[RMDB]
RNA sequence: GGGAACGACUCGAGUAGAGUCGAAAAGAGCGAUUUAAUAUUAGAUCGUCGCGAUCUAAACAGUCCGACACGCUGUCGCGGGGCAGCACCUCCCGGGAAAGGGCCCUUGGUACGCAUUCGAAAGAAAAUAAAUUAGGGUGUUCGCACCCUAAUUUAUAAAAGAAACAACAACAACAAC
Reactivity to DMS in 0.01 (KOAc 150mM, MgCl2 10mM, bicine 150mM(pH8.5), 24C), signal-to-noise 2, nucleotides 027 to 126: g010a170g010c000g000a080u010u020u030a100a150u020a190u000u000a050g000a010u000c050g020u010c180g030c110g000a030u000c020u000a070a080a220c110a120g000u000c030c030g010a070c090a060c180g030c040u000g000u000c050g030c110g000g000g000g000c060a030g000c020a110c070c030u000c040c020c030g000g000g020a100a070a120g020g010g000c020c020c020u000u000g010g040u000a040c090g000c080a100u010u000c020g010a070a100a100g000a060a060a120
Reactivity to 2A3 in 0.01 (KOAc 150mM, MgCl2 10mM, bicine 150mM(pH8.5), 24C), signal-to-noise 1, nucleotides 027 to 126: g000a000g010c000g000a000u000u000u300a270a200u190a150u230u040a010g000a040u020c010g150u060c080g000c070g090a010u000c030u020a000a000a110c000a030g130u050c020c020g050a010c060a010c070g040c010u000g020u070c010g000c070g070g000g030g000c020a020g000c030a040c000c030u000c000c030c050g020g010g000a130a160a010g000g090g020c000c000c000u000u070g040g010u080a040c020g010c030a110u050u150c030g030a000a070a040g120a010a130a040